[RMDB]
RNA sequence: GGGAACGACUCGAGUAGAGUCGAAAACGGUACUAUGAAUUGAUGCAAGGUGUGGAGCGACCUUAAACAGUUCUGGUGGUGCUCUGAAUGGAGUGCUCUACUGAGAUUAUAAAAUAGAAGGUAACCUGAAGGGGAAAUGAGUUCGCUCAUUUCCCAAGAUGGUAGUAAAGUUCGCUUUACUACCAUCAAAAGAAACAACAACAACAAC
Reactivity to 2A3 in 0.01 (KOAc 150mM, MgCl2 10mM, bicine 150mM(pH8.5), 24C), signal-to-noise 9, nucleotides 027 to 156: c030g010g040u070a020c030u050a060u200g030a060a040u110u040g060a080u080g090c050a030a020g020g000u030g020u060g050g030a030g010c020g010a020c000c000u050u090a080a080a020c020a040g010u040u020c020u040g030g010u020g020g030u020g000c000u010c020u070g150a090a080u230g020g010a010g010u030g010c020u010c010u050a030c020u030g030a010g010a090u090u100a060u190a120a090a060a020u110a030g050a070a020g050g010u030a050a000c000c030u060g090a070a050g010g010g000g000a000a000a000u000g000a000g020u030u050c090g030c040u000c000a000u000u000u010c000c000c000a000a010
Reactivity to DMS in 0.01 (KOAc 150mM, MgCl2 10mM, bicine 150mM(pH8.5), 24C), signal-to-noise 2, nucleotides 027 to 156: c040g050g020u000a050c030u010a120u000g000a080a050u000u010g000a100u000g020c100a060a050g030g030u000g000u000g000g000a100g010c040g010a100c010c010u010u020a050a160a150c050a110g010u000u000c050u000g040g020u000g010g010u000g000c000u000c030u000g010a120a100u000g010g020a080g030u000g010c000u010c010u000a040c040u000g010a100g000a070u000u030a130u000a060a050a040a130u010a100g000a070a090g000g000u000a060a000c030c040u000g000a110a150g000g020g050g000a000a010a010u000g000a010g000u010u000c300g020c000u010c000a030u000u000u000c000c010c000a000a000
This 207-nucleotide RNA was probed chemically with 2A3 and DMS. For DMS, 3,562 sequencing reads were counted. Conditions: 150 mM KOAc, 10 mM MgCl2 and 150 mM bicine (pH 8.5), 24 C.